[RMDB]
Source: RMDB library OK3TST, as collected in RNAgym. An RNA of 207 nucleotides, treated with 2A3 and read out base by base. Conditions: 150 mM KOAc, 10 mM MgCl2 and 150 mM bicine (pH 8.5), 24 C.
RNA sequence: GGGAACGACUCGAGUAGAGUCGAAAACAUGCAGUGGGCUUGAAACUCAGCCCCACCACUUCUCUGUGGCCUCACUUAAGCUCUGUCACUUCCCAGAGCUCUGCUUUCCUCACCUGUAAAAUGGGGAUAUGAUGACAUCAACUCAUAAGGUGCCUGCGUGUGACCCAAAAUUCGUUUUGGGUCACACAAAAGAAACAACAACAACAAC
Reactivity to 2A3 in 0.01 (KOAc 150mM, MgCl2 10mM, bicine 150mM(pH8.5), 24C), signal-to-noise 2, nucleotides 027 to 156: c020a020u150g030c010a000g010u170g020g020g050c000u090u240g200a120a120a010c060u060c100a010g040c030c010c000c030a000c040c000a010c040u180u130c040u060c120u160g020u000g060g050c060c000u170c030a100c030u090u080a080a000g000c000u010c020u000g040u070c000a030c170u140u080c020c010c000a010g010a000g000c020u030c040u040g010c010u020u020u010c000c000u000c000a020c040c010u040g100u180a000a030a120a120u010g000g000g020g020a000u020a070u090g060a030u090g030a010c040a060u100c030a080a060c030u080c060a030u010a120a110g000g010u020g010c010c000u170g050c000